[RMDB]
RNA sequence: GGGAACGACUCGAGUAGAGUCGAAAAAGAAAAUGUGUUUGCUUAAGCACUAUCAGGUAGGAGUUGACAGAGACAGUACAGAAAGAAUAGUUAGUUUGGGCCCCUGACAAUUGUAGUAUUGUAGGCAAUACGAUGUAGAGUUCGCUCUACAUCGUAUAAAAGAAACAACAACAACAAC
Reactivity to 2A3 in 0.01 (KOAc 150mM, MgCl2 10mM, bicine 150mM(pH8.5), 24C), signal-to-noise 2, nucleotides 027 to 126: a040g080a020a030a030a070u120g020u020g040u070u040u070g050c030u090u080a050a010g020c000a030c030u070a050u070c070a030g000g080u050a010g010g090a080g030u060u050g070a030c010a040g020a000g010a020c020a000g070u080a020c020a010g120a090a080a010g040a080a050u070a050g040u130u040a010g000u040u110u000g000g000g000c000c000c000c000u000g040a010c040a040a030u110u050g040u030a040g040u000a030u050u100g020u030a020g050g010c040a060
Reactivity to DMS in 0.01 (KOAc 150mM, MgCl2 10mM, bicine 150mM(pH8.5), 24C), signal-to-noise 5, nucleotides 027 to 126: a060g010a080a060a090a090u010g010u000g000u000u010u010g010c110u010u010a050a090g010c010a030c010u000a110u000c080a060g000g010u000a060g010g010a080g010u000u000g000a070c080a060g010a100g010a060c050a030g010u000a040c080a070g000a080a080a090g000a080a070u010a060g000u000u000a040g010u000u000u010g000g010g010c030c050c070c040u000g010a040c070a030a050u000u000g020u000a060g000u000a060u000u000g020u000a060g010g000c120a090